An RNA of 177 nucleotides, treated with 2A3 and DMS and read out base by base. 2A3 is a SHAPE reagent: it acylates the 2'-hydroxyl of flexible nucleotides of all four kinds. For 2A3 the reverse transcriptase was SuperScript II with manganese. Values cover nucleotides 27 to 126. The data come from the RNA Mapping Database (RMDB), library M2PK50.

RNA sequence: GGGAACGACUCGAGUAGAGUCGAAAACAUGUGUACUUCGGUACACAUGAAAUGUCCGCCAUUAUUGGCUAAGGCUACACGGACGGCCGGGUCAAAUGCCGAAAAUCGUUGCGUUCGCGCAACGAAACAAUCAUAGAGGCUUCGGCCUCUAUGAUUGAAAAGAAACAACAACAACAAC
Reactivity to 2A3 in 0.01 (KOAc 150mM, MgCl2 10mM, bicine 150mM(pH8.5), 24C), signal-to-noise 4, nucleotides 027 to 126: c000a010u010g000u000g000u000a010c000u040u080c240g110g000u010a000c000a000c000a000u010g000a010a010a000u130g000u020c010c030g080c030c070a150u150u140a140u210u250g010g020c030u040a140a120g010g000c000u040a030c100a030c110g080g060a020c030g020g000c010c030g010g030g000u070c040a090a020a070u140g020c030c010g030a060a020a010a070u040c000g000u010u010g010c020g030u040u030c250g010c000g010c060a000a000c000g000a000a000a000
Reactivity to DMS in 0.01 (KOAc 150mM, MgCl2 10mM, bicine 150mM(pH8.5), 24C), signal-to-noise 3, nucleotides 027 to 126: c000a010u000g010u000g010u000a000c000u000u010c170g000g000u010a010c000a010c010a010u000g010a010a050a080u000g020u010c010c050g010c070c050a060u020u020a160u000u010g000g010c010u010a100a100g010g020c020u000a070c140a130c070g020g000a030c030g000g000c010c010g010g010g000u000c070a040a070a050u010g000c030c020g000a100a060a110a110u010c010g020u000u000g000c000g000u000u020c160g010c020g030c000a000a000c000g000a010a050a110